[RMDB]
RNA sequence: GGGAACGACUCGAGUAGAGUCGAAAAAUCCUACUGUUUUGCCUGGGGCUUUUGCGUACAGUCAGAUGAGGCCUCAUGUUCGUUACGACUUGUAUGAUGGUAACAUGUUUAUUAAAUUUCCUGAAGUAGAGCAUGGUGUUCGCACCAUGCAAAAGAAACAACAACAACAAC
Reactivity to DMS in 0.01 (KOAc 150mM, MgCl2 10mM, bicine 150mM(pH8.5), 24C), signal-to-noise 2, nucleotides 027 to 129: a000u030c020c000u030a000c000u060g000u000u000u000u000g010c090c060u000g010g020g050g020c050u000u000u000u000g000c210g000u000a130c000a070g050u030c060a120g030a120u050g020a100g000g000c050c040u040c120a090u020g020u060u010c060g000u050u030a000c140g000a130c090u000u000g030u020a040u000g050a100u030g000g040u040a040a040c110a080u000g010u040u040u030a050u040u050a020a030a060u050u050u080c030c020u000g040a120a110g060u030a040g020a110
Reactivity to 2A3 in 0.01 (KOAc 150mM, MgCl2 10mM, bicine 150mM(pH8.5), 24C), signal-to-noise 5, nucleotides 027 to 129: a000u020c010c000u010a040c000u010g020u000u030u080u070g000c000c000u010g000g000g000g000c050u120u050u090u090g060c030g010u090a060c040a090g060u060c050a040g030a170u090g020a100g000g040c000c000u030c020a050u100g040u040u060c050g000u040u070a070c070g010a040c000u030u020g020u050a060u090g040a030u080g030g050u020a040a020c020a030u040g060u050u080u000a220u070u130a120a070a110u060u070u030c010c000u050g090a070a020g030u090a020g010a000

The record gives the reactivity of an RNA of 170 nucleotides to DMS and 2A3. DMS adducts were read by reverse transcription with MarathonRT. Values cover nucleotides 27 to 129. Conditions: 150 mM KOAc, 10 mM MgCl2 and 150 mM bicine (pH 8.5), 24 C.